[RMDB]
RNA sequence: GGGAACGACUCGAGUAGAGUCGAAAAAGAAGGGCGUCGAAACUGUCAUACUCUGUGUAGUCGUCCGGAAACAUGCAGGUCCAAAGAGCGACCAGAGCGGUGCUUGGGAGACACAUGCGCCCGAGGACGCUCACCGCCGCCAGCGCCUGGGCGGGACCGUAUCUCGGGUAUUCGUACCCGAGAUACGAAAAGAAACAACAACAACAAC
Reactivity to 2A3 in 0.01 (KOAc 150mM, MgCl2 10mM, bicine 150mM(pH8.5), 24C), signal-to-noise 2, nucleotides 027 to 156: a000g100a020a050g020g000g020c010g030u020c000g070a110a060a010c040u040g070u130c070a070u080a300c080u100c030u180g000u000g010u070a010g020u030c020g000u000c000c000g000g000a030a130a000c090a050u190g000c030a020g010g040u070c090c030a050a260a000g060a040g050c030g070a070c000c000a080g040a030g070c120g050g020u090g060c010u010u040g090g080g000a220g080a020c110a020c010a100u080g020c000g020c080c000c020g000a050g000g040a050c050g000c060u030c020a050c030c020g070c000c000g080c030c010a100g110c000g010c030c020u080g000g050g000c030g010g000g000a010c030